[RMDB]
RNA sequence: GGGAACGACUCGAGUAGAGUCGAAAAAGUACAGACACAUGAUCAAAGCACAACCCAAGCAAAAAUUGGACACUUCAAUCCAAACGGAGUACCCGGCUUUGCAGACGAUUGUGUACCAUUCAAAAAACUUGCCCAAUCAGUUCGCUGAUUGGGCAAGAAAAGAAACAACAACAACAAC
Reactivity to 2A3 in 0.01 (KOAc 150mM, MgCl2 10mM, bicine 150mM(pH8.5), 24C), signal-to-noise 1, nucleotides 027 to 126: a010g110u010a070c000a080g120a000c040a000c000a120u130g000a080u090c080a000a100a100g000c000a000c010a000a170c010c000c060a050a050g000c020a000a000a000a040a040u190u000g040g030a000c070a010c230u250u020c110a150a150u060c000c090a170a220a070c060g000g000a060g020u000a050c060c000c000g030g030c000u000u000u020g000c000a000g050a040c000g060a180u020u020g020u000g000u000a100c000c060a080u270u300c130a000a000a000a060a000a000

An RNA of 177 nucleotides, treated with 2A3 and read out base by base.
For 2A3, 374 sequencing reads were counted.
Conditions: 150 mM KOAc, 10 mM MgCl2 and 150 mM bicine (pH 8.5), 24 C.
Source: RMDB library OK1LIB, as collected in RNAgym.
Reactivities are given for positions 27 through 126.